[RMDB]
RNA sequence: GGGAACGACUCGAGUAGAGUCGAAAAACGACAGCGAUUAACGUUACAAUAAAUUGUAAAUCAAUUUCUACAUUAGCGACGGGUGCGACCAUAAUUGCAAGCAUGGCAGGGUAAAUGCCUGCACAACGCGCGUGUUUCAGUUCGCUGAAACACGCGCAAAAGAAACAACAACAACAAC
Reactivity to 2A3 in 0.01 (KOAc 150mM, MgCl2 10mM, bicine 150mM(pH8.5), 24C), signal-to-noise 2, nucleotides 027 to 126: a000c080g000a020c070a000g130c150g070a250u300u300a000a150c000g020u000u180a000c000a300a150u260a300a000a010u120u000g000u200a110a040a300u070c000a000a000u010u160u190c020u050a140c000a020u000u300a000g150c000g300a200c000g000g000g000u000g000c040g000a000c000c010a050u110a300a070u160u160g000c080a050a050g000c110a110u150g210g000c000a000g110g020g000u000a020a020a020u050g150c000c000u000g050c000a140c080a050a020c000
Description
Structure probing data (2A3) for a 177-nucleotide construct. Reactivities are given for positions 27 through 126. The data come from the RNA Mapping Database (RMDB), library OK1LIB. Values are in units of 0.01, from 0 to 300, in steps of 10.